Structure probing data (2A3) for a 177-nucleotide construct.
RNA sequence: GGGAACGACUCGAGUAGAGUCGAAAAGCCGUGCCCCUCGACGAGCACCUCGUCGGUGACCUCCUGGGGCGGCGCGGCAGAUCCGGCAAGCACCUCGGCGUGAGGGAUGCCAAGAUCCGGCAGACUCGGAGUCGAGUACGUUCGCGUACUCGACUCCAAAAGAAACAACAACAACAAC
Reactivity to 2A3 in 0.01 (KOAc 150mM, MgCl2 10mM, bicine 150mM(pH8.5), 24C), signal-to-noise 2, nucleotides 027 to 126: g000c000c030g000u030g000c000c000c000c000u000c000g100a020c060g000a030g030c000a040c030c040u180c000g290u110c160g010g020u000g020a070c020c020u030c000c000u100g020g000g000g020c000g000g050c000g000c010g000g000c010a000g020a020u000c000c000g010g020c050a050a100g000c000a060c010c000u100c070g300g030c080g180u300g020a010g000g100g050a140u040g000c000c000a000a020g050a030u060c010c000g020g000c030a020g040a080c030u070c110

Source: RMDB library OK1LIB, as collected in RNAgym. For 2A3 the reverse transcriptase was SuperScript II with manganese. Conditions: 150 mM KOAc, 10 mM MgCl2 and 150 mM bicine (pH 8.5), 24 C. For 2A3, 903 sequencing reads were counted. Reactivities are rounded to 0.1 and cut off at 0 and 3.